The record gives the reactivity of an RNA of 207 nucleotides to 2A3.
Conditions: 150 mM KOAc, 10 mM MgCl2 and 150 mM bicine (pH 8.5), 24 C.
RNA sequence: GGGAACGACUCGAGUAGAGUCGAAAACUUCAAUCACAGAUUAAAUAUGAUGGAGUACCAAGACAUUGAAGCUUUCUCCCAUCGUAAGGGAAUUGGGAUUUACAGGGUCACCACUGCCAGAGGCUCAGUGGUUGAAGCUACGGGAAAUCAUCAAUUCUGCGAUUACGUAUUUCGAUACGUAAUCGCAAAAAGAAACAACAACAACAAC
Reactivity to 2A3 in 0.01 (KOAc 150mM, MgCl2 10mM, bicine 150mM(pH8.5), 24C), signal-to-noise 2, nucleotides 027 to 156: c020u080u000c010a020a030u070c060a070c080a100g080a210u100u300a180a070a120u300a140u240g060a050u090g070g040a020g000u030a160c050c070a090a030g030a030c100a130u040u150g060a070a010g010c010u040u120u040c050u070c000c010c000a020u150c110g080u100a080a130g110g030g090a010a010u070u070g000g000g000a000u010u000u010a030c030a040g080g040g030u030c000a000c000c010a000c000u010g070c030c010a120g040a150g210g000c050u000c030a000g000u030g000g040u000u020g000a000a000g030c010u050a110c030g130g060g120a020a020a020u040c060a000u000c000a020a030u050u080c020